[RMDB]
RNA sequence: GGGAACGACUCGAGUAGAGUCGAAAAGUAUCCUUUCCACAUACUAUUUGCAUUGCACAGCGAUAGUAUGGAUGGGACAUUGGUAUUUACAGUACUAAUGCAAAUACUGUAUUUUUCUAUAUAGUGCCGCCCCUUAACCGUUCGCGGUUAAGGGGCGAAAAGAAACAACAACAACAAC
Reactivity to 2A3 in 0.01 (KOAc 150mM, MgCl2 10mM, bicine 150mM(pH8.5), 24C), signal-to-noise 2, nucleotides 027 to 126: g030u030a090u080c010c060u000u010u000c000c000a070c000a050u050a000c000u010a000u000u020u300g030c070a100u000u030g090c030a060c070a100g000c000g000a000u000a000g000u000a000u000g000g000a020u030g040g000g000a000c020a010u010u000g000g000u030a060u010u170u090a060c030a020g020u000a000c000u000a010a010u050g070c040a010a070a000u040a070c000u010g060u200a250u100u130u000u000u000c040u020a120u010a040u120a170g000u010g000c000